[RMDB]
RNA sequence: GGGAACGACUCGAGUAGAGUCGAAAAGGCCAGGCCCAUCAGGGCUUGUGGAAUGGGAAGGAGAAGGGACGCUUCCCCUUCUGCAGGCCUGCUGGGUGUGGCUAAAAGCCGUAACUUCGGUUACGGCGAGGCGUUAAAACUUCGGUUUUAACGCCUCAAAAGAAACAACAACAACAAC
Reactivity to 2A3 in 0.01 (KOAc 150mM, MgCl2 10mM, bicine 150mM(pH8.5), 24C), signal-to-noise 1, nucleotides 027 to 126: g030g040c010c000a030g030g050c000c010c000a020u040c050a030g130g060g100c000u000u000g020u030g000g010a010a010u000g000g010g020a000a030g060g090a210g080a160a160g130g090g050a010c050g010c110u020u020c020c000c000c000u010u010c010u000g000c000a000g030g000c000c000u000g020c010u000g000g000g020u130g060u020g020g000c000u020a030a010a000a050g000c010c000g000u010a000a000c010u040u030c140g070g000u000u010a000c000g000g000c000